[RMDB]
RNA sequence: GGGAACGACUCGAGUAGAGUCGAAAAGGCCGCCUAAGUAUCAAGGUGACCCCUGACCUCGACGGGUUCUACCGAGAGCUGAAGGCGGCUGUCGAGGCCGCCGAGAAGAUGAAGGUCCACAUCCCGGUCGAGCCGGACAUGGGGAACUUCCGGCAGGAAUUGAUCGAUUAUUCGUAAUCGAUCAAUUAAAAGAAACAACAACAACAAC
Reactivity to 2A3 in 0.01 (KOAc 150mM, MgCl2 10mM, bicine 150mM(pH8.5), 24C), signal-to-noise 2, nucleotides 027 to 156: g040g000c000c000g000c020c000u030a040a020g030u050a170u300c090a080a050g000g000u020g010a010c010c000c000c030u070g090a120c030c050u080c070g080a080c050g020g000g000u050u040c020u110a060c000c000g060a050g030a030g180c010u030g010a090a050g000g010c030g000g010c000u000g000u000c010g020a030g010g020c000c000g000c000c020g090a140g010a150a020g020a030u150g080a100a020g070g070u010c010c000a030c000a030u020c000c000c000g000g020u110c140g060a100g060c010c000g010g000a010c020a030u030g000g000g000g030a010a020c000u010u000c000c000g000g020c050a100g020g040
Reactivity to DMS in 0.01 (KOAc 150mM, MgCl2 10mM, bicine 150mM(pH8.5), 24C), signal-to-noise 3, nucleotides 027 to 156: g000g040c020c010g040c000c000u000a120a060g020u000a090u000c060a040a300g010g010u000g010a040c010c010c010c030u010g010a140c070c050u000c080g030a100c110g000g020g010u010u000c050u000a050c020c010g000a300g010a100g020c020u000g010a110a130g010g030c000g000g050c010u000g060u010c020g000a110g020g040c000c020g000c020c010g010a170g020a050a130g020a090u000g000a060a060g020g010u000c010c010a040c030a050u000c010c000c010g000g000u020c110g020a250g020c020c010g000g000a120c050a060u000g010g000g010g000a040a300c010u000u000c010c020g000g010c010a100g030g000